This 177-nucleotide RNA was probed chemically with 2A3 and DMS.
For 2A3 the reverse transcriptase was SuperScript II with manganese.
The RNA was probed in 150 mM KOAc, 10 mM MgCl2 and 150 mM bicine (pH 8.5) at 24 C.
DMS adducts were read by reverse transcription with MarathonRT.
[RMDB]
RNA sequence: GGGAACGACUCGAGUAGAGUCGAAAAGUUUGAGCAAAAUGUUUUCUACGUCUUCGCCCACGUAACCGGCUUCGGUCAGUGAGGUGGCAUCGGCGAUCGCGAAGGGGACGUCGAGAAGCCGCGCAAGCGCGGCUGCAUUAUUCGUAAUGCAGCCGCGAAAAGAAACAACAACAACAAC
Reactivity to 2A3 in 0.01 (KOAc 150mM, MgCl2 10mM, bicine 150mM(pH8.5), 24C), signal-to-noise 4, nucleotides 027 to 126: g030u070u110u130g050a060g010c060a030a070a100a140u110g050u000u080u030u020c020u030a030c020g030u000c020u050u030c030g020c010c020c010a030c030g050u030a040a040c030c000g020g010c000u120u120c100g040g000u020c020a040g010u020g120a090g040g070u040g020g000c000a040u030c010g050g020c050g110a220u060c100g000c040g170a120a070g010g010g040g010a000c000g000u010c010g000a010g020a100a010g030c020c020g000c010g020c060a040a030g230
Reactivity to DMS in 0.01 (KOAc 150mM, MgCl2 10mM, bicine 150mM(pH8.5), 24C), signal-to-noise 6, nucleotides 027 to 126: g010u000u000u010g010a110g010c080a090a060a080a080u020g000u000u000u000u000c020u000a080c050g000u000c020u000u000c050g010c050c010c030a040c070g020u010a160a070c080c030g030g010c050u000u000c060g020g020u000c040a070g010u000g010a140g010g020u000g010g020c120a150u000c040g000g010c030g010a070u010c080g010c040g010a090a210g010g000g000g010a040c020g010u000c030g000a070g020a070a120g010c060c070g020c100g030c120a040a110g020